[RMDB]
RNA sequence: GGGAACGACUCGAGUAGAGUCGAAAACCCGUUCUUUUCUGAGGAGUGCGCUGCGCCGCCCAGCCCUGUCGCCCCCCGGAGGUGAUCCCUCCCUCCUGCCGGCCCGCCAGCCUGACCUGUGCUUGGCAACUCCGUAUACUUUCGAGUAUACGGAGUUAAAAGAAACAACAACAACAAC
Reactivity to DMS in 0.01 (KOAc 150mM, MgCl2 10mM, bicine 150mM(pH8.5), 24C), signal-to-noise 5, nucleotides 027 to 126: c010c000c010g020u020u000c010u000u000u010u010c040u020g000a140g030g010a090g010u010g010c050g020c030u000g020c080g010c040c020g010c030c030c030a100g020c050c030c020u010g010u000c050g010c010c000c010c020c030c040g010g000a030g000g010u010g000a130u010c040c020c010u020c040c010c010u000c020c010u000g020c030c040g000g010c040c020c050g010c030c020a050g020c030c010u010g000a100c080c060u000g000u000g010c020u010u010g010g000c100
Reactivity to 2A3 in 0.01 (KOAc 150mM, MgCl2 10mM, bicine 150mM(pH8.5), 24C), signal-to-noise 5, nucleotides 027 to 126: c010c000c000g010u080u050c030u030u070u040u020c080u090g080a060g030g040a060g050u080g030c040g010c040u050g020c020g020c030c000g010c010c010c010a020g020c010c010c010u040g040u060c040g030c010c010c000c000c000c010g030g010a020g000g010u090g030a080u040c010c000c000u010c010c010c000u010c000c010u030g040c020c000g030g020c010c020c000g010c000c000a010g010c000c010u040g030a080c020c020u050g030u040g040c030u070u050g020g000c010
This 177-nucleotide RNA was probed chemically with DMS and 2A3. Conditions: 150 mM KOAc, 10 mM MgCl2 and 150 mM bicine (pH 8.5), 24 C. For DMS the reverse transcriptase was MarathonRT. Reactivities are given for positions 27 through 126. High 2A3 reactivity points to a flexible backbone, as in loops and unpaired stretches. 2A3 adducts were read by reverse transcription with SuperScript II with manganese.